[RMDB]
RNA sequence: GGGAACGACUCGAGUAGAGUCGAAAAGUAGUGGAGAAGAAAGAAGUGGAAACACUUCACGCACGUCCACUACAACGUGCGCAGUAUUGGAGUGUUUGAGGGAGAACCUCAAGCACUCCAGUACAAAAUUAGGUGAGGUGUUCGCACCUCACCUAAUAAAAGAAACAACAACAACAAC
Reactivity to 2A3 in 0.01 (KOAc 150mM, MgCl2 10mM, bicine 150mM(pH8.5), 24C), signal-to-noise 2, nucleotides 027 to 126: g030u020a020g010u040g060g110a130g030a260a070g100a110a210a020g020a010a000g000u010g000g030a020a060a000c010a000c000u000u010c020a020c030g040c000a040c040g150u020c000c020a030c000u010a000c000a000a000c040g050u170g000c080g000c110a070g010u000a000u000u000g000g000a000g000u000g000u010u000u000g000a010g000g010g030a210g060a130a150c000c000u010c000a010a000g000c000a000c000u000c000c000a000g000u000a000c000a000a030a000
Reactivity to DMS in 0.01 (KOAc 150mM, MgCl2 10mM, bicine 150mM(pH8.5), 24C), signal-to-noise 2, nucleotides 027 to 126: g030u000a000g030u000g000g000a150g030a090a120g010a270a190a080g070a000a000g000u000g000g000a170a050a220c030a000c000u000u000c010a040c230g000c170a120c120g000u030c000c020a040c000u000a020c030a110a100c130g030u030g020c150g000c300a100g000u000a000u000u030g000g030a000g010u000g000u010u000u000g000a010g000g000g030a160g040a120a230c000c030u000c000a030a000g000c000a000c000u010c000c010a000g060u010a000c000a000a020a080